[RMDB]
RNA sequence: GGGAACGACUCGAGUAGAGUCGAAAAAUCGCCCACGCUAAGGAAACGAUCUAUUUCGUUUGUAAACCUUAUUAAGCCGACCGCCUAGUAGCGCGGCUAUUGCCAGACCGUGGACGAUACCAGCGUCAGACCGUACAGGAUUCGUCCUGUACGGUCUAAAAGAAACAACAACAACAAC
Reactivity to 2A3 in 0.01 (KOAc 150mM, MgCl2 10mM, bicine 150mM(pH8.5), 24C), signal-to-noise 7, nucleotides 027 to 126: a000u010c010g010c000c010c000a000c010g020c040u060a010a010g010g030a030a020a000c010g030a020u050c090u220a260u140u190u010c020g010u040u020u060g200u180a160a120a090c010c010u070u040a090u100u150a110a020g000c010c000g060a200c040c070g060c030c030u090a170g040u260a050g070c020g010c010g030g020c010u000a010u010u060g050c030c000a030g040a070c030c000g010u010g000g010a010c000g000a000u020a050c000c010a010g080c040g120u070c040
Reactivity to DMS in 0.01 (KOAc 150mM, MgCl2 10mM, bicine 150mM(pH8.5), 24C), signal-to-noise 4, nucleotides 027 to 126: a040u000c030g010c010c000c010a020c000g010c100u010a050a040g010g000a040a020a010c000g000a000u020c300u020a100u000u010u000c000g000u000u000u000g000u030a060a060a300c060c040u000u010a110u040u020a040a050g010c000c020g000a120c150c060g010c000c060u000a130g040u010a190g000c040g000c030g000g000c000u010a000u010u020g000c090c100a100g010a150c300c010g030u000g000g020a030c000g000a020u000a270c030c030a080g000c150g000u030c170
This 177-nucleotide RNA was probed chemically with 2A3 and DMS. Values cover nucleotides 27 to 126.